Record summary
Structure probing data (2A3 and DMS) for a 177-nucleotide construct. For DMS the reverse transcriptase was MarathonRT. 2A3 adducts were read by reverse transcription with SuperScript II with manganese. Source: RMDB libraries RFM100 and RFMREP, as collected in RNAgym.
[RMDB]
RNA sequence: GGGAACGACUCGAGUAGAGUCGAAAACGCAACCGCAAAGGCAAGCAAUGCACCGAUCAUGCUGAAAAAAACACGAGGUGCAUACAUGGUGCUCUCCUCCCGAGAACGAUUUCUCCAUUUUUGACUGAGUCCUGUGAUCAUUCGUGAUCACAGGACUAAAAGAAACAACAACAACAAC
Reactivity to 2A3 in 0.01 (KOAc 150mM, MgCl2 10mM, bicine 150mM(pH8.5), 24C), signal-to-noise 2, nucleotides 027 to 126: c040g000c030a020a020c060c000g000c140a100a020a000g050g000c060a100a060g000c030a000a010u030g000c000a010c020c000g070a140u090c020a040u110g000c060u050g110a010a000a000a000a000a000a190c030a000c060g010a000g020g000u060g000c000a000u020a000c000a070u070g100g000u070g030c010u030c000u010c090c010u050c000c000c000g030a030g000a040a020c040g010a020u010u070u000c030u020c040c100a050u080u160u050u030u080g200a190c030u080g020
Reactivity to DMS in 0.01 (KOAc 150mM, MgCl2 10mM, bicine 150mM(pH8.5), 24C), signal-to-noise 1, nucleotides 027 to 126: c150g000c120a120a230c050c030g050c020a070a070a110g000g000c010a040a050g040c060a040a030u000g000c000a000c000c090g050a130u000c050a050u040g000c230u000g010a000a040a040a110a080a090a070c050a030c010g010a120g000g010u010g010c000a050u000a070c100a080u000g000g030u030g020c000u000c010u000c050c000u000c020c030c010g000a080g000a060a040c060g000a160u000u000u010c000u000c030c030a090u000u000u000u000u000g000a140c140u010g000